[RMDB]
RNA sequence: GGGAACGACUCGAGUAGAGUCGAAAACAAGUGUUCGCACUUGCUUAGGUCCUAAGUCGGUAGCUCUAGUAGCUGUGCGACGAUCUCUAUCGGAAACGAUAGAGGGAGCACCGAAAGAGCUAUAAUCGAUAUGGAAAACGGGAAGGUUCGCCUUCAACUGCAAAAGAAUAUUCGUAUUCUUUUGCAGAAAAGAAACAACAACAACAAC
Reactivity to DMS in 0.01 (KOAc 150mM, MgCl2 10mM, bicine 150mM(pH8.5), 24C), signal-to-noise 4, nucleotides 027 to 156: c010a000a020g020u000g010u000u020c300g040c030a010c000u000u000g000c000u010u010a070g010g010u000c020c010u010a060a280g030u000c000g010g030u000a040g030c000u000c010u000a140g000u010a190g010c160u000g080u000g020c000g000a130c170g000a020u000c010u010c000u000a020u010c000g040g030a230a150a300c020g010a020u000a030g010a020g020g000g020a100g010c010a020c000c030g000a150a200a140g010a030g000c000u000a030u000a110a080u000c030g000a120u010a270u000g020g000a070a090a090a130c090g010g020g020a090a080g010g000u000u000c100g020c020c000u020u000c010a040a160
Reactivity to 2A3 in 0.01 (KOAc 150mM, MgCl2 10mM, bicine 150mM(pH8.5), 24C), signal-to-noise 8, nucleotides 027 to 156: c010a010a010g000u010g040u140u190c260g050c120a000c000u010u040g050c050u100u170a100g030g090u020c000c010u050a140a060g030u010c010g000g020u010a000g010c000u000c010u010a090g020u040a030g070c230u150g020u000g010c040g090a270c000g000a040u010c000u000c000u000a000u000c000g040g050a120a040a070c010g000a000u000a000g000a000g000g000g000a010g000c000a000c010c020g030a050a030a000g000a000g000c010u010a020u040a040a050u110c010g010a000u010a060u120g050g050a040a130a070a090c120g130g040g030a010a020g050g030u100u150c190g130c050c000u040u040c020a070a070